The record gives the reactivity of an RNA of 177 nucleotides to DMS. Reactivities are given for positions 27 through 126. The DMS profile rests on 3,850 reads. The data come from the RNA Mapping Database (RMDB), library 15KREP. In probing experiments dimethyl sulfate is read out at A N1 and C N3, which are open when not base-paired.

RNA sequence: GGGAACGACUCGAGUAGAGUCGAAAACCUGUUGAAGAUAUUGCGCAGGUUGUCAUAGCUGACACCUUACAGGAAACUCCUGUUGUGCCUGAUACUGUUGAAGUCCCACCGCAAGUGGUGAAACUUCGUUCAACAUAUUGUUCGCAAUAUGUUGAACAAAAGAAACAACAACAACAAC
Reactivity to DMS in 0.01 (KOAc 150mM, MgCl2 10mM, bicine 150mM(pH8.5), 24C), signal-to-noise 4, nucleotides 027 to 126: c010c000u010g010u010u000g010a130a110g000a150u010a040u000u000g010c190g020c060a040g010g010u010u010g010u010c020a030u000a170g000c260u000g000a020c010a030c020c060u000u010a030c020a020g020g010a100a180a230c250u000c010c000u000g000u000u000g010u000g000c010c060u000g000a050u000a050c080u000g020u020u010g010a020a060g000u000c030c020c000a020c020c040g000c210a120a250g010u010g000g030u000g010a030a040a050c030u000u000c190